[RMDB]
Chemical mapping of a 177-nucleotide RNA with DMS and 2A3. It was measured as part of the RMDB library OK2TST. The reactions ran in a buffer of 150 mM KOAc, 10 mM MgCl2 and 150 mM bicine (pH 8.5), at 24 C. As a SHAPE reagent, 2A3 marks flexible, mostly unpaired nucleotides at the ribose 2'-OH.
RNA sequence: GGGAACGACUCGAGUAGAGUCGAAAAGGUGGUAACUAUGUAUCUCGAGGAGCUAUGAGAUUAAGUGAUUCUUCCAACUCCAACGAUCAAGCUAUUACUGCUGAUGAGUUAGAAAAAAUGAACACAACGCUGUGGUUGUGUUCGCACAACCACAGCGAAAAGAAACAACAACAACAAC
Reactivity to DMS in 0.01 (KOAc 150mM, MgCl2 10mM, bicine 150mM(pH8.5), 24C), signal-to-noise 2, nucleotides 027 to 126: g010g010u000g020g020u000a020a090c100u020a070u000g020u010a010u000c030u000c020g020a300g020g050a090g030c160u000a100u000g010a100g020a030u000u000a070a100g020u010g000a190u000u000c010u020u000c050c080a100a190c010u000c010c070a030a190c080g010a020u010c030a050a060g010c030u010a040u000u000a040c090u000g030c010u000g020a070u000g000a030g010u000u000a040g010a010a030a110a040a100a070u000g010a000a020c050a030c080a030a040
Reactivity to 2A3 in 0.01 (KOAc 150mM, MgCl2 10mM, bicine 150mM(pH8.5), 24C), signal-to-noise 2, nucleotides 027 to 126: g040g000u040g000g000u000a030a020c010u010a020u300g060u110a070u100c010u000c020g030a070g000g030a030g000c080u080a030u130g040a020g010a060u060u030a120a050g090u030g140a160u030u000c000u000u000c000c050a110a120c020u000c000c010a060a050c020g000a000u060c070a070a020g030c010u010a010u130u080a030c070u080g000c020u010g030a090u070g080a080g100u100u140a060g110a080a060a000a010a000a030u250g060a060a020c040a000c020a080a060